The record gives the reactivity of an RNA of 177 nucleotides to 2A3 and DMS. Reactivities are given for positions 27 through 126. High DMS reactivity at an A or C suggests that its Watson-Crick edge is free. The RNA was probed in 150 mM KOAc, 10 mM MgCl2 and 150 mM bicine (pH 8.5) at 24 C. 2A3 adducts were read by reverse transcription with SuperScript II with manganese.
RNA sequence: GGGAACGACUCGAGUAGAGUCGAAAAGAGGGACGAAAGCCAGGGUCUCGAACCGGAUUAGAUACCCGGGUAGUCCUGGCUGUAAACAAUGCUCGCUAGGUAUGUCACGCGCCAUGAGCACGUGAUGUUAAGCCAUUGUAUUCGUACAAUGGCUUAAAAAAGAAACAACAACAACAAC
Reactivity to 2A3 in 0.01 (KOAc 150mM, MgCl2 10mM, bicine 150mM(pH8.5), 24C), signal-to-noise 6, nucleotides 027 to 126: g100a020g030g010g020a020c050g050a140a060a010g000c010c000a000g010g020g030u050c040u020c090g030a090a060c010c000g000g000a020u040u070a060g060a150u140a130c010c000c000g010g010g020u070a020g010u030c000c000u000g010g010c000u000g010u030a010a010a010c050a070a060u150g020c020u020c030g000c040u050a030g040g080u080a050u190g020u030c000a010c010g000c000g000c010c010a230u300g020a030g050c000a000c000g000u000g000a010u010g050
Reactivity to DMS in 0.01 (KOAc 150mM, MgCl2 10mM, bicine 150mM(pH8.5), 24C), signal-to-noise 9, nucleotides 027 to 126: g010a100g010g010g010a070c090g010a100a110a020g010c000c010a010g000g000g000u040c070u010c150g000a100a300c010c000g000g000a040u000u010a110g000a170u060a110c140c000c000g000g000g000u020a070g010u010c000c000u000g000g010c000u000g000u020a040a090a110c160a070a090u020g010c020u010c030g000c100u010a090g010g010u010a050u020g000u000c000a000c020g010c050g020c000c020a140u030g010a210g030c010a030c010g010u000g000a020u000g010